This 207-nucleotide RNA was probed chemically with 2A3. Reactivities are rounded to 0.1 and cut off at 0 and 3. 2A3 adducts were read by reverse transcription with SuperScript II with manganese.
RNA sequence: GGGAACGACUCGAGUAGAGUCGAAAAGACUUCGAGGUGAUCCCCUUCGGCGACGAACCGCUGGACAAGGAGAUCGCCGACUUCAUCGAAGAGCAGCUCAACGGCAUCGAGAGCUUCGAGGAUGUGGAGAAUGACCUGCUCGACGCAAUCGGCAAGGCCUGCUCAUUCGAUUCGUCGAAUGAGCAGGAAAAGAAACAACAACAACAAC
Reactivity to 2A3 in 0.01 (KOAc 150mM, MgCl2 10mM, bicine 150mM(pH8.5), 24C), signal-to-noise 1, nucleotides 027 to 156: g050a030c010u010u010c030g100a070g000g000u020g070a040u020c040c010c000c020u010u010c010g010g010c010g000a170c050g040a040a060c080c000g000c010u110g070g020a060c040a110a020g040g000a080g010a050u000c000g000c000c000g020a000c010u100u050c040a090u030c000g000a000a000g020a000g040c050a030g040c020u070c080a140a140c130g110g000c020a010u090c090g010a000g000a010g060c000u070u010c010g020a080g090g010a040u040g080u170g140g050a100g070a040a100u150g020a040c000c040u030g050c020u030c000g020a020c010g000c020a030a110u020c000g030g040c040a080a040g120g070
For 2A3, 582 sequencing reads were counted.